[RMDB]
RNA sequence: GGGAACGACUCGAGUAGAGUCGAAAAGGUGCACACAGCGGCCAAGGCCAGCUCCACAUUCCUCCCUCCAGCUCCCCACUUCACCGGAGACCGAGCCCUGCAUGCAGAGGAAGGGCCCCAGCUCCACACAGCGUACCGGAUUCGUCCGGUACGCUGUAAAAGAAACAACAACAACAAC
Reactivity to 2A3 in 0.01 (KOAc 150mM, MgCl2 10mM, bicine 150mM(pH8.5), 24C), signal-to-noise 1, nucleotides 027 to 126: g080g070u050g000c050a020c020a000c000a090g080c000g020g040c020c080a070a080g100g000c000c010a000g000c020u030c050c000a050c020a000u050u060c000c010u010c000c030c020u040c020c000a010g010c030u040c000c030c000c000a090c000u140u030c000a030c000c050g080g000a020g030a030c000c070g040a010g030c000c030c000u020g050c060a070u070g080c020a050g110a040g140g000a030a010g040g000g020c000c000c000c010a050g000c080u080c000c010a020c000
Source: RMDB library RFM100, as collected in RNAgym. Chemical mapping of a 177-nucleotide RNA with 2A3. Reactivities are rounded to 0.1 and cut off at 0 and 3. High 2A3 reactivity points to a flexible backbone, as in loops and unpaired stretches. The RNA was probed in 150 mM KOAc, 10 mM MgCl2 and 150 mM bicine (pH 8.5) at 24 C.